[RMDB]
RNA sequence: GGGAACGACUCGAGUAGAGUCGAAAAGGAAAUGUCGAAGGAUGAUGUCCACCACGCCGUGCUGUCACGUUCUCGGUACCCUCGAUUUCCGUCUCUUCUUGCAUGCGUAUCCAACCGCCUCGCGGCUGUUAUGUGCAUUCUUCGGAAUGCACAUAACAAAAGAAACAACAACAACAAC
Reactivity to DMS in 0.01 (KOAc 150mM, MgCl2 10mM, bicine 150mM(pH8.5), 24C), signal-to-noise 2, nucleotides 027 to 126: g000g020a030a080a080u000g030u000c050g010a150a100g000g010a070u010g000a100u000g000u000c070c030a080c080c060a100c080g000c110c050g020u010g000c100u000g010u010c060a120c050g000u000u000c020u010c030g020g010u000a110c060c010c010u000c030g010a090u010u000u000c040c030g000u000c020u000c040u000u000c010u010u010g000c120a040u000g010c040g000u010a090u000c020c060a120a130c070c030g000c040c070u000c180g010c080g000g010c130u000
Reactivity to 2A3 in 0.01 (KOAc 150mM, MgCl2 10mM, bicine 150mM(pH8.5), 24C), signal-to-noise 2, nucleotides 027 to 126: g050g010a050a080a060u140g020u060c050g020a090a030g060g010a060u080g000a040u070g100u000c020c010a010c000c010a060c090g040c050c030g050u050g000c060u040g020u080c020a030c040g030u060u000c030u020c000g010g020u080a090c000c000c000u020c030g070a070u030u020u000c030c030g040u000c010u000c000u040u030c010u030u050g040c030a050u070g010c000g020u040a090u010c000c000a030a070c030c010g000c030c010u030c080g040c000g020g030c030u020

The data come from the RNA Mapping Database (RMDB), library RFMREP. This 177-nucleotide RNA was probed chemically with DMS and 2A3. 2A3 adducts were read by reverse transcription with SuperScript II with manganese. DMS adducts were read by reverse transcription with MarathonRT. The DMS profile rests on 1,937 reads.